[RMDB]
RNA sequence: GGGAACGACUCGAGUAGAGUCGAAAAUCAACCGCAUUGUUGGGUGAAAGUUGGAGGAUAAAUCCUCACCAAGAUUUAAAUUAAGCAAGAGAUAUAAGGCCGCUCCUUAUAUUGCGACUUGCUUAAAGAUAUCCGGCAAAGUUCGCUUUGCCGGAAACAGACGUAGUACGUUCGCGUACUACGUCUGAAAAGAAACAACAACAACAAC
Reactivity to DMS in 0.01 (KOAc 150mM, MgCl2 10mM, bicine 150mM(pH8.5), 24C), signal-to-noise 2, nucleotides 027 to 156: u030c020a090a300c000c010g010c120a130u000u000g040u000u000g000g020g050u000g010a080a070a120g010u020u020g000g010a090g030g010a200u010a030a160a200u010c000c000u020c020a110c040c040a040a130g010a100u020u020u000a080a130a140u000u000a010a050g000c000a000a040g010a300g010a020u000a020u020a010a000g010g000c040c300g000c220u000c020c000u020u010a010u010a020u000u000g010c040g040a140c000u020u000g040c000u000u000a020a020a100g000a180u000a070u010c010c030g010g020c000a010a020a000g000u000u010c300g020c000u000u010u000g000c000c000g000g000a010a010a070